[RMDB]
RNA sequence: GGGAACGACUCGAGUAGAGUCGAAAACAGUACGAAGCAUACACAUAUGCUCACAUGGAUGAUAAACAACUCGCAGACUUGCUUUUCUGACAAAUAAAUCAGUGCUGGUAGAUCUUUAAAAUGUCAAACUUCUCAUUCAGCAUGAGACCUGUCACUGCACAUACUCUAAGUUCGCUUAGAGUAUGUGAAAAGAAACAACAACAACAAC
Reactivity to DMS in 0.01 (KOAc 150mM, MgCl2 10mM, bicine 150mM(pH8.5), 24C), signal-to-noise 3, nucleotides 027 to 156: c020a120g020u010a090c100g000a130a090g030c000a050u000a100c100a140c170a170u000a030u010g020c020u000c050a120c070a120u010g010g030a100u010g020a170u000a080a090a070c000a080a070c030u020c030g010c050a110g010a060c060u000u000g020c010u000u000u000u000c030u010g000a090c050a030a040a130u000a070a070a230u010c040a060g010u000g010c020u000g010g000u000a060g000a020u000c000u000u000u000a060a050a080a100u010g020u010c070a000a050a050c040u000u010c030u000c080a100u000u000c030a070g020c080a080u010g010a120g010a020c120c060u000g030u000c020a070c060u000g000
Reactivity to 2A3 in 0.01 (KOAc 150mM, MgCl2 10mM, bicine 150mM(pH8.5), 24C), signal-to-noise 9, nucleotides 027 to 156: c030a010g110u160a050c070g080a130a000g010c010a010u060a050c090a020c020a240u090a020u140g010c010u050c030a080c020a070u100g090g010a040u060g030a050u180a130a110a030c060a040a050c050u060c120g030c030a020g020a170c040u070u080g060c000u090u090u070u050c030u060g050a050c050a050a140a080u220a050a090a040u080c020a020g020u000g020c010u010g000g010u030a040g020a060u000c010u020u190u120a100a170a080a070u170g060u090c040a040a130a130c090u110u020c020u010c010a050u190u070c050a050g040c000a070u030g010a000g000a020c000c010u070g030u120c010a010c030u030g010
An RNA of 207 nucleotides, treated with DMS and 2A3 and read out base by base. The 2A3 profile rests on 10,143 reads. It was measured as part of the RMDB library OK3TST.